[RMDB]
RNA sequence: GGGAACGACUCGAGUAGAGUCGAAAAGGAUAUGUAAAAUACAGGAUUUCCAAUCCUAGCAGGAAAGGGAGGGAAACGGAUACUCAAUUUAAAGUGAGUAAACAGAAUUCCAUACUCGAUCUCAUAGAUACAUAUAGAAUUCUGCGGAAAGCCGUAUGCGGUACACGCAGUUCGCUGCGUGUACCGCAAAAGAAACAACAACAACAAC
Reactivity to 2A3 in 0.01 (KOAc 150mM, MgCl2 10mM, bicine 150mM(pH8.5), 24C), signal-to-noise 1, nucleotides 027 to 156: g060g010a030u070a050u210g060u110a080a070a110a030u240a110c110a040g020g060a020u020u020u040c130c040a000a000u000c000c010u030a080g030c110a030g110g000a070a050a010g040g000g020a110g010g000g050a090a020a000c010g070g010a000u050a050c000u000c030a060a140u090u220u280a180a200a050g060u030g000a000g000u050a000a150a000c010a000g000a010a050u000u000c030c000a000u000a000c070u050c150g020a000u000c010u030c100a050u090a160g010a000u000a050c010a000u040a010u010a030g020a020a000u030u000c000u050g010c060g070g030a060a030a010g000c000c000g020u020a130u070
Background:
The record gives the reactivity of an RNA of 207 nucleotides to 2A3. For 2A3 the reverse transcriptase was SuperScript II with manganese. The 2A3 profile rests on 499 reads.